[RMDB]
RNA sequence: GGGAACGACUCGAGUAGAGUCGAAAAGAUAUGGAUCGUCCAGGAGACAUGCUAGAACUCGGAAACGAGUUCAUAGCAACAGCUCCGGACGAUCCUAAGUCAAAACUCCGAAGUUCGCUUCGGAGAACCUGAUAUUUAGCUUCGGCUAAAUAUCAGGAAAAGAAACAACAACAACAAC
Reactivity to 2A3 in 0.01 (KOAc 150mM, MgCl2 10mM, bicine 150mM(pH8.5), 24C), signal-to-noise 2, nucleotides 027 to 126: g000a000u030a010u050g020g000a000u000c020g020u010c040c120a210g060g020a010g000a040c280a200u120g020c000u010a000g000a010a010c000u000c000g040g000a030a020a020c010g000a010g000u000u010c010a070u010a000g000c000a040a040c060a040g130c000u000c010c000g010g000a000c000g000a000u010c000c000u010a000a000g000u000c010a040a030a080a180c010u000c010c000g020a010a000g000u090u230c300g040c210u000u000c010g000g000a000g000a000a020
Reactivity to DMS in 0.01 (KOAc 150mM, MgCl2 10mM, bicine 150mM(pH8.5), 24C), signal-to-noise 2, nucleotides 027 to 126: g010a020u000a270u000g010g000a010u000c000g000u000c010c000a120g040g000a040g020a180c170a190u000g030c010u010a020g020a030a010c000u000c000g020g020a080a070a150c000g010a020g020u000u000c000a030u000a030g000c000a040a100c290a210g000c000u000c000c010g000g010a010c000g000a000u000c000c000u000a010a040g000u010c020a130a050a100a170c020u000c000c000g000a000a020g010u000u010c270g020c010u000u000c010g010g010a000g020a040a090